[RMDB]
RNA sequence: GGGAACGACUCGAGUAGAGUCGAAAACACUGUCAUUUCUGUCACUCCAAUGAUCACUAGCACACGCCUAUGCUUUUUCGCGGCGAGUUCAACAAUUUAUCCGCACUUGAUACGACAAAAAAACAGAGUUAACGCCAUCCUUCGGGAUGGCGUUAACAAAAGAAACAACAACAACAAC
Reactivity to 2A3 in 0.01 (KOAc 150mM, MgCl2 10mM, bicine 150mM(pH8.5), 24C), signal-to-noise 1, nucleotides 027 to 126: c010a000c090u000g050u190c070a190u060u060u040c030u040g160u070c030a060c110u000c000c060a130a130u030g000a040u130c030a060c050u100a100g040c050a040c000a000c040g000c000c000u130a050u130g000c000u090u170u060u000u010c040g000c000g060g000c000g000a000g070u050u000c110a070a040c030a000a160u160u050u160a030u080c060c000g010c020a000c000u000u010g000a000u070a130c050g000a090c060a010a040a000a000a000a060a010c000a000g210a120